[RMDB]
Structure probing data (2A3) for a 177-nucleotide construct. For 2A3 the reverse transcriptase was SuperScript II with manganese. The reactions ran in a buffer of 150 mM KOAc, 10 mM MgCl2 and 150 mM bicine (pH 8.5), at 24 C.
RNA sequence: GGGAACGACUCGAGUAGAGUCGAAAAGAGCAGUCAUUAUGGCGAACCUUGGCUGCUGGAUGCUGGUUCUCUUUGUGGCCACAUGGAGUGACCUGGGCCUCUGCAAGAAGCGCCCGAAGCCUGGAGGGAUGGGACGCCUGUUCGCAGGCGUCCCAUCAAAAGAAACAACAACAACAAC
Reactivity to 2A3 in 0.01 (KOAc 150mM, MgCl2 10mM, bicine 150mM(pH8.5), 24C), signal-to-noise 1, nucleotides 027 to 126: g080a000g020c040a000g000u000c030a060u070u270a090u200g020g040c040g060a030a030c030c010u010u030g000g000c000u020g000c000u000g030g040a010u000g050c060u080g030g000u110u030c020u000c000u030u080u110g150u010g080g030c050c000a100c030a050u180g000g020a040g030u140g000a060c000c020u030g000g050g130c050c000u020c070u000g030c000a020a290g060a060a000g090c040g000c000c000c000g160a060a080g020c000c000u020g110g000a100g010g100

Values cover nucleotides 27 to 126.